[RMDB]
RNA sequence: GGGAACGACUCGAGUAGAGUCGAAAAGAUAUGGAGACAUCACUCGCCAAUUGGCAUGGGAGCCUACAAUUCGGAAACGAAUUGAGGCGAAGAACAUGCCAAUUGGCGAGUGAGUGUCUCCUAAGUCCUUCUAUGUAGUCUUCGGACUACAUAGAAGAAAAGAAACAACAACAACAAC
Reactivity to DMS in 0.01 (KOAc 150mM, MgCl2 10mM, bicine 150mM(pH8.5), 24C), signal-to-noise 1, nucleotides 027 to 126: g000a110u020a300u010g030g000a030g010a030c000a090u000c000a020c000u010c000g050c000c000a010a000u000u000g010g000c000a000u000g000g000g000a180g000c000c000u020a080c000a010a010u000u010c000g000g000a230a080a300c000g030a010a010u000u000g010a040g000g000c000g040a040a060g020a100a210c000a000u000g000c000c000a000a000u000u000g010g000c010g000a000g020u000g000a010g020u000g000u000c000u000c000c000u000a000a060g000u010c030
The record gives the reactivity of an RNA of 177 nucleotides to DMS.